[RMDB]
Background: The record gives the reactivity of an RNA of 177 nucleotides to DMS and 2A3. Source: RMDB library 15KREP, as collected in RNAgym. The reactions ran in a buffer of 150 mM KOAc, 10 mM MgCl2 and 150 mM bicine (pH 8.5), at 24 C. For 2A3, 5,152 sequencing reads were counted.
RNA sequence: GGGAACGACUCGAGUAGAGUCGAAAAUAAAAGGUAAAACAGCCUGUGGGUGAAACACACCCACAGGGCCCAUUGGGCGCUAGCACUCUGGUAUCACGGUACCUUUGUGCGCCUGUAUUACCGGAAACAUACAGAAUGUGUUCGCACAUUCUGUAUGAAAAGAAACAACAACAACAAC
Reactivity to DMS in 0.01 (KOAc 150mM, MgCl2 10mM, bicine 150mM(pH8.5), 24C), signal-to-noise 3, nucleotides 027 to 126: u000a070a060a140a170g000g010u000a000a010a120a010c010a000g000c020c000u000g020u000g000g000g010u000g000a110a170a110c290a200c020a010c000c000c000a000c010a010g010g010g010c000c000c000a020u000u010g030g020g010c000g010c010u010a030g040c000a000c010u000c000u000g000g010u000a010u000c020a130c250g030g000u000a000c000c000u000u000u000g010u000g010c000g010c000c000u000g000u000a060u000u000a010c010c000g000g000a090a060a150
Reactivity to 2A3 in 0.01 (KOAc 150mM, MgCl2 10mM, bicine 150mM(pH8.5), 24C), signal-to-noise 2, nucleotides 027 to 126: u050a000a080a000a000g000g000u020a000a010a010a030c000a010g000c000c000u010g000u000g010g000g010u020g040a040a140a010c090a010c000a000c040c010c020a000c000a000g000g010g000c000c000c000a020u150u260g010g000g000c020g000c120u130a020g000c000a000c010u000c000u000g000g010u000a000u020c020a040c180g110g000u010a010c000c000u000u010u010g010u010g000c010g000c000c000u000g000u000a050u000u000a000c000c000g000g000a050a020a000